An RNA of 177 nucleotides, treated with 2A3 and DMS and read out base by base. 2A3 is a SHAPE reagent: it acylates the 2'-hydroxyl of flexible nucleotides of all four kinds. For 2A3 the reverse transcriptase was SuperScript II with manganese. The RNA was probed in 150 mM KOAc, 10 mM MgCl2 and 150 mM bicine (pH 8.5) at 24 C. The DMS profile rests on 637 reads. Source: RMDB library RFMREP, as collected in RNAgym.
[RMDB]
RNA sequence: GGGAACGACUCGAGUAGAGUCGAAAAACAAGAUGAGAAAGUGCAGUAUUGACUGUCUUCAAACGCACCUGUCCUUGCUCAAGUGCUGGGAUUGUGUGCCAACGGCUAUGAUAGAUAUGAAUAGAGCGAACCAAGUUCAGUUCGCUGAACUUGGUUCAAAAGAAACAACAACAACAAC
Reactivity to 2A3 in 0.01 (KOAc 150mM, MgCl2 10mM, bicine 150mM(pH8.5), 24C), signal-to-noise 2, nucleotides 027 to 126: a000c040a060a010g070a130u200g020a020g040a080a050a050g050u110g090c010a020g000u090a150u250u230g170a070c000u020g020u020c000u020u020c000a030a100a020c070g000c000a000c010c010u000g010u000c000c000u000u050g000c000u010c160a230a120g120u060g130c000u010g020g020g000a000u010u090g020u000g000u020g130c010c000a040a030c040g060g000c030u120a050u150g030a030u040a090g100a070u110a050u260g090a110a000u040a030g070a000g080c060
Reactivity to DMS in 0.01 (KOAc 150mM, MgCl2 10mM, bicine 150mM(pH8.5), 24C), signal-to-noise 1, nucleotides 027 to 126: a200c070a130a060g030a120u000g020a130g020a030a020a090g000u020g000c000a030g000u000a100u020u020g030a110c080u020g010u000c020u000u000c050a090a090a170c140g000c020a010c000c010u000g000u000c010c040u000u040g000c010u000c180a130a090g030u000g010c000u000g020g010g000a020u000u000g000u020g010u000g010c050c140a050a110c140g000g010c040u000a100u000g000a100u000a070g020a090u000a080u000g000a130a030u010a090g000a050g040c180